[RMDB]
RNA sequence: GGGAACGACUCGAGUAGAGUCGAAAAGCAGGUUGCGGGCUCAAACUGAAGGUUGAUUAUCGCCCCAUUGGGUUGUAUGCUGGUGUGGUGGUGGCCCCUGGCCUAGGGACGCUACCCGAUGUGGUGCCGCCAGUAAGUUUUUCGAAACUUACUGGCGAAAAGAAACAACAACAACAAC
Reactivity to DMS in 0.01 (KOAc 150mM, MgCl2 10mM, bicine 150mM(pH8.5), 24C), signal-to-noise 2, nucleotides 027 to 126: g040c070a060g020g000u020u010g030c060g010g020g030c040u000c050a040a040a090c070u000g010a100a070g010g010u010u020g010a130u010u000a060u010c090g000c030c010c020c080a130u010u000g010g010g010u010u020g020u000a070u000g010c010u000g020g010u020g010u000g020g020u010g010g020u000g000g020c040c010c020c030u000g020g040c090c100u010a090g020g030g000a060c040g000c030u000a020c010c020c020g000a050u000g020u000g010g000u000g010c110